[RMDB]
RNA sequence: GGGAACGACUCGAGUAGAGUCGAAAAGAAGGCUGGUCAUCCGUUCGGACCAGAAAGGCAGUCACAAACGAAACCUGAGGAAACAGGAAGCCACAACAAAAGCCAUGUGAUUAGCGAAUGGAAAGAACAUGAUUAUCCGAUUCGUCGGAUAAUCAUGAAAAGAAACAACAACAACAAC
Reactivity to 2A3 in 0.01 (KOAc 150mM, MgCl2 10mM, bicine 150mM(pH8.5), 24C), signal-to-noise 9, nucleotides 027 to 126: g150a050a020g090g020c010u010g000g020u010c020a100u050c040c010g010u020u040c010g020g010a010c000c000a000g000a020a010a000g050g010c030a010g030u060c030a010c050a090a120a030c100g090a100a050a040c000c010u060g020a070g060g220a120a060a030c000a010g010g030a020a010g040c010c020a050c030a160a060c030a020a110a010a010g020c020c010a030u070g050u050g040a140u070u130a040g030c010g020a010a010u030g010g020a040a040a050g040a040a020
Reactivity to DMS in 0.01 (KOAc 150mM, MgCl2 10mM, bicine 150mM(pH8.5), 24C), signal-to-noise 6, nucleotides 027 to 126: g010a090a080g020g000c010u020g010g020u000c020a140u020c020c020g010u000u000c020g020g010a070c010c000a030g000a020a070a090g020g010c010a080g010u010c040a060c100a040a110a120c140g020a120a070a120c000c010u020g020a160g040g010a100a090a180c030a020g000g000a090a080g000c040c040a090c180a090a060c210a050a060a100a100g000c020c030a090u030g010u010g010a080u010u020a110g030c010g000a020a030u010g000g010a100a090a100g010a060a140